Record summary
Structure probing data (2A3) for a 177-nucleotide construct. Reactivities are given for positions 27 through 126. Source: RMDB library M2PK50, as collected in RNAgym. The RNA was probed in 150 mM KOAc, 10 mM MgCl2 and 150 mM bicine (pH 8.5) at 24 C.
RNA sequence: GGGAACGACUCGAGUAGAGUCGAAAAGGCGUAGCGUUCGCGCUACGCCAAAUGAGCAUGUACAAAUGCCCAAAGUACAUGCGAAAUAAAAGAGGCCAUAAAAAACCACUUAGUUCGCUAAGUGGAAGCAGGAAAUACAGUUCGCUGUAUUUCCUGCAAAAGAAACAACAACAACAAC
Reactivity to 2A3 in 0.01 (KOAc 150mM, MgCl2 10mM, bicine 150mM(pH8.5), 24C), signal-to-noise 1, nucleotides 027 to 126: g010g000c000g000u000a010g030c000g000u030u040c250g000c020g000c140u010a000c000g030c010c010a010a000a000u020g000a020g030c020a000u010g030u000a020c010a020a190a070u100g070c000c010c010a010a000a010g000u010a010c000a010u000g000c000g010a080a090a020u170a030a090a030a010g130a080g080g000c060c030a040u270a090a240a000a020a010a000c010c000a010c010u010u000a000g030u070u070c220g000c130u000a000a000g000u010g000g000a000a030